Background: Conditions: 150 mM KOAc, 10 mM MgCl2 and 150 mM bicine (pH 8.5), 24 C. An RNA of 207 nucleotides, treated with 2A3 and read out base by base.
[RMDB]
RNA sequence: GGGAACGACUCGAGUAGAGUCGAAAAUUUAAAAGCCAGGACGGUCACCUUUGGGGUGGUGACAAGUGUGAUCACUUGGGUGGUGGCUGUGUUUGCGUCUCUCCCAGGAAUCAUCUUUACCAGAUCUCAAUUUUGACCACAUCUUCGGAUGUGGUCACCCCGUACAUCGUUUCGACGAUGUACGGGGAAAAGAAACAACAACAACAAC
Reactivity to 2A3 in 0.01 (KOAc 150mM, MgCl2 10mM, bicine 150mM(pH8.5), 24C), signal-to-noise 1, nucleotides 027 to 156: u120u170u060a110a090a010a030g000c010c050a040g100g000a010c080g050g020u010c010a010c010c000u060u240u260g030g000g000g020u040g000g000u040g000a000c020a050a050g120u100g040u040g060a010u090c020a010c120u040u020g070g000g030u100g030g000u030g070g000c010u010g010u030g000u020u100u110g070c100g120u020c020u000c000u000c040c000c010a040g030g090a020a020u070c070a010u000c040u050u060u130a110c080c010a040g030a140u070c030u070c090a080a070u130u090u180u130g010a000c000c000a010c010a030u000c000u010u040c150g050g010a040u000g030u000g010g000u000c000a000